[RMDB]
Background
This 207-nucleotide RNA was probed chemically with DMS and 2A3. It was measured as part of the RMDB library OK3TST. DMS adducts were read by reverse transcription with MarathonRT. The RNA was probed in 150 mM KOAc, 10 mM MgCl2 and 150 mM bicine (pH 8.5) at 24 C. Reactivities are given for positions 27 through 156. For 2A3, 3,814 sequencing reads were counted. 2A3 adducts were read by reverse transcription with SuperScript II with manganese.

RNA sequence: GGGAACGACUCGAGUAGAGUCGAAAAAGAGACAUGUGACUCUUCCUUUCAUUUGAACAUUUAGAGGCCAUUGUAGGGUUACUAAUUUGCCUAAUUUCAAUAUCGUAGUGUCUCAGGGAAUAGGAAGGUGCUAGGAAAGAAAGAAACGGGAAUGGCCAGCUAAGUAAAUCUUCGGAUUUACUUAGCUAAAAGAAACAACAACAACAAC
Reactivity to DMS in 0.01 (KOAc 150mM, MgCl2 10mM, bicine 150mM(pH8.5), 24C), signal-to-noise 3, nucleotides 027 to 156: a100g000a090g010a080c040a060u020g030u000g000a080c040u000c010u000u000c010c030u000u000u000c030a180u010u010u000g000a090a070c090a140u000u000u000a050g010a180g020g080c000c020a060u000u010g020u000a130g010g030g020u000u000a290c090u000a060a110u000u010u010g010c030c020u010a040a090u000u000u000c050a090a090u000a120u010c050g000u000a120g040u000g000u000c000u000c040a160g010g020g010a060a110u010a110g000g010a050a050g010g020u000g020c050u010a040g000g000a050a060a070g000a050a050a120g000a050a050a080c120g010g010g000a070a020u000g010g010c020c060
Reactivity to 2A3 in 0.01 (KOAc 150mM, MgCl2 10mM, bicine 150mM(pH8.5), 24C), signal-to-noise 5, nucleotides 027 to 156: a000g050a010g010a020c050a070u170g040u080g110a050c010u010c000u070u070c000c000u060u120u080c130a210u100u110u170g070a080a030c020a040u050u110u150a150g020a050g050g000c030c010a030u020u070g080u130a090g020g030g060u080u080a050c030u110a060a190u080u100u180g020c010c000u060a100a120u030u100u130c060a070a050u060a070u160c070g080u040a050g020u010g030u040c010u030c070a030g060g040g030a070a100u070a150g020g050a040a030g010g010u030g000c010u010a010g070g040a050a020a050g030a050a140a000g030a030a090a020c060g050g010g030a010a030u020g010g000c000c040